[RMDB]
RNA sequence: GGGAACGACUCGAGUAGAGUCGAAAAGCCGUCGACUUCGGUGUAGUGCCGGUUCAUGUUCGGGAAUUUCUUCACCGCCUGCACCAGGGCGUAGCCCAGCAAAUGCGUGAACGAGAUCUUGCCGCCGCCAGCGUACUACAUUCGUGUAGUACGCUGGAAAAGAAACAACAACAACAAC
Reactivity to DMS in 0.01 (KOAc 150mM, MgCl2 10mM, bicine 150mM(pH8.5), 24C), signal-to-noise 2, nucleotides 027 to 126: g010c040c040g020u010c010g030a090c040u010u000c060g000g000u010g020u000a040g000u000g030c090c010g000g020u010u010c100a060u000g000u000u000c050g010g030g020a130a130u000u010u000c060u000u010c080a090c040c020g010c050c070u000g010c030a040c060c050a100g010g020g000c000g020u010a130g000c020c000c010a140g000c080a050a040a110u010g000c060g030u010g010a040a060c090g030a070g010a060u010c080u000u010g030c010c030g000c140c120g020
Reactivity to 2A3 in 0.01 (KOAc 150mM, MgCl2 10mM, bicine 150mM(pH8.5), 24C), signal-to-noise 2, nucleotides 027 to 126: g060c040c010g050u030c020g050a190c060u140u070c120g000g030u040g060u120a050g040u080g060c070c050g030g020u080u080c050a050u170g080u140u100c080g050g030g120a070a110u140u120u040c030u020u090c020a050c070c030g030c000c020u020g000c040a060c050c040a020g010g010g000c020g040u060a030g050c020c000c020a050g000c020a000a050a060u160g010c020g000u090g050a040a030c080g000a030g010a100u030c000u000u090g030c020c020g000c010c020g060

The record gives the reactivity of an RNA of 177 nucleotides to DMS and 2A3. The 2A3 profile rests on 1,570 reads. Reactivities are rounded to 0.1 and cut off at 0 and 3. Conditions: 150 mM KOAc, 10 mM MgCl2 and 150 mM bicine (pH 8.5), 24 C.